[RMDB]
RNA sequence: GGGAACGACUCGAGUAGAGUCGAAAAGCUAGGGAGCGCACGAUGCCAGUGCCCUGACGUCUAGGCUGCGUCUCAACUAGUCUGAGUCAAUUAAAACGCUGGGGGUGAUGUACGGGACUAGUACACAGUGUUAGCAGUUCUUCGGAGCUGUUAACACAAAAGAAACAACAACAACAAC
Reactivity to DMS in 0.01 (KOAc 150mM, MgCl2 10mM, bicine 150mM(pH8.5), 24C), signal-to-noise 9, nucleotides 027 to 126: g010c030u010a060g000g010g010a100g010c070g020c070a060c100g000a080u010g010c030c030a040g020u010g000c040c050c020u000g010a080c070g000u010c040u020a080g010g010c050u010g000c060g000u020c040u010c080a070a090c050u000a020g000u000c030u010g000a110g010u010c060a070a100u030u030a060a070a080a100c090g000c030u010g000g000g000g000g010u000g000a060u010g010u010a040c060g000g000g010a100c050u010a050g010u000a060c100a070c150a110
Reactivity to 2A3 in 0.01 (KOAc 150mM, MgCl2 10mM, bicine 150mM(pH8.5), 24C), signal-to-noise 9, nucleotides 027 to 126: g020c020u030a020g010g020g020a030g010c020g000c010a010c030g050a030u100g020c000c010a020g010u020g040c000c000c020u020g020a020c020g040u030c040u080a060g020g050c020u030g010c020g120u040c020u010c040a030a110c020u040a010g040u020c020u030g030a010g030u020c010a010a030u080u130a070a050a020a020c040g000c030u030g000g000g000g000g020u030g020a070u040g010u020a020c010g010g000g030a020c010u020a020g030u050a020c060a000c010a030